The data come from the RNA Mapping Database (RMDB), library OK2TRN. Structure probing data (DMS and 2A3) for a 177-nucleotide construct. The RNA was probed in 150 mM KOAc, 10 mM MgCl2 and 150 mM bicine (pH 8.5) at 24 C. 2A3 adducts were read by reverse transcription with SuperScript II with manganese. DMS adducts were read by reverse transcription with MarathonRT.
RNA sequence: GGGAACGACUCGAGUAGAGUCGAAAAAAUCGCGAAGAUAACUUUAAACAGCAUCAAAUUUUAUAUCAGAAAUUGAGUGAAAUGAUUCAUGACACAUUAUAAAUACUAUGAAGCAAACGUUGAGACCCUAUCCAAAGAUAUUCGUAUCUUUGGAUAGAAAAGAAACAACAACAACAAC
Reactivity to DMS in 0.01 (KOAc 150mM, MgCl2 10mM, bicine 150mM(pH8.5), 24C), signal-to-noise 3, nucleotides 027 to 126: a090a050u000c050g000c090g000a120a160g010a080u000a080a070c060u000u000u000a060a080a090c080a060g020c040a050u000c040a060a070a110u010u000u000u000a040u000a050u020c040a180g000a050a070a100u000u000g000a090g020u000g010a080a090a080u000g010a090u000u000c040a010u000g000a240c080a030c060a070u000u000a030u000a060a030a020u000a050c050u000a060u000g000a030a050g000c030a030a060a050c090g020u000u000g010a060g000a190c060c040
Reactivity to 2A3 in 0.01 (KOAc 150mM, MgCl2 10mM, bicine 150mM(pH8.5), 24C), signal-to-noise 2, nucleotides 027 to 126: a020a030u080c040g020c080g090a030a040g000a060u020a080a030c020u110u100u080a220a110a020c020a040g030c030a020u010c020a050a060a140u100u080u050u070a080u030a060u140c010a010g150a150a200a070u150u140g000a020g040u030g090a000a060a180u200g020a120u030u090c040a010u100g030a010c030a000c010a050u080u210a040u170a160a070a030u120a130c060u050a010u240g020a010a000g000c050a050a060a080c040g040u040u060g010a000g010a050c010c000